[RMDB]
RNA sequence: GGGAACGACUCGAGUAGAGUCGAAAAUGAAAUGUUUUCACUAUCCGCAAUGUCAGGGAAUCUUUUCACUGGGUUAGUGGUUAUUCCUGUUCUUGGCUAUGCUCUGACUUAAGAUGUCAUCAAGUUAUACAACUAGCUCAUUCGUGAGCUAGUUGUAAAAAGAAACAACAACAACAAC
Reactivity to 2A3 in 0.01 (KOAc 150mM, MgCl2 10mM, bicine 150mM(pH8.5), 24C), signal-to-noise 2, nucleotides 027 to 126: u110g010a110a110a000u170g050u070u040u000u080c000a000c040u030a070u050c010c040g060c130a060a080u070g060u150c010a030g080g000g100a150a220u120c110u070u160u010u030c050a040c050u030g060g040g000u040u050a040g000u030g040g010u060u070a020u060u030c010c010u040g070u070u050c050u020u050g030g000c010u070a130u260g010c000u000c010u040g020a040c000u040u040a110a070g090a170u070g040u030c000a060u210c000a030a020g030u080u030a070
Reactivity to DMS in 0.01 (KOAc 150mM, MgCl2 10mM, bicine 150mM(pH8.5), 24C), signal-to-noise 3, nucleotides 027 to 126: u000g010a090a110a090u000g010u010u000u000u000c020a050c010u000a050u000c010c000g020c090a050a070u000g000u000c080a050g000g030g010a070a090u010c070u000u010u000u000c030a030c030u000g020g010g000u000u000a030g020u000g010g010u000u010a140u000u000c000c000u000g020u000u010c050u010u000g010g010c040u000a080u000g000c010u000c040u000g000a040c050u010u010a110a150g000a130u010g010u000c010a040u010c050a040a040g010u000u000a120